RNA sequence: GGGAACGACUCGAGUAGAGUCGAAAAGGGGUCGCUUGAUUCGACCCUAGAAGCUUGGAUUUAUAUGGCUGAAGCCUCCACGGCCAUAUUGUCAGCUUCUAUGUGCUCGACUCAAGCGACGGAGGCACCCAAACGCCCAAGCUUCGGCUUGGGCGAAGUUACAGUACGACUUCGGUCGUACUGUAACAAAAGAAACAACAACAACAAC
Reactivity to 2A3 in 0.01 (KOAc 150mM, MgCl2 10mM, bicine 150mM(pH8.5), 24C), signal-to-noise 1, nucleotides 027 to 156: g070g020g020g000u000c000g000c010u000u010g010a000u000u020c000g010a000c030c000c000u000a000g000a020a000g000c090u300u300g150g000a050u100u300u060a010u060a000u000g000g000c000u000g000a110a000g050c000c020u030c000c000a020c020g000g010c010c020a000u010a000u010u030g020u040c090a060g020c030u000u050c010u010a020u110g080u110g030c110u000c010g000a010c020u000c000a020a000g000c010g000a000c010g000g000a000g000g000c010a030c010c020c000a090a120a020c020g000c000c000c020a000a000g010c000u060u130c300g080g000c020u000u000g000g020g000c000g000a040a000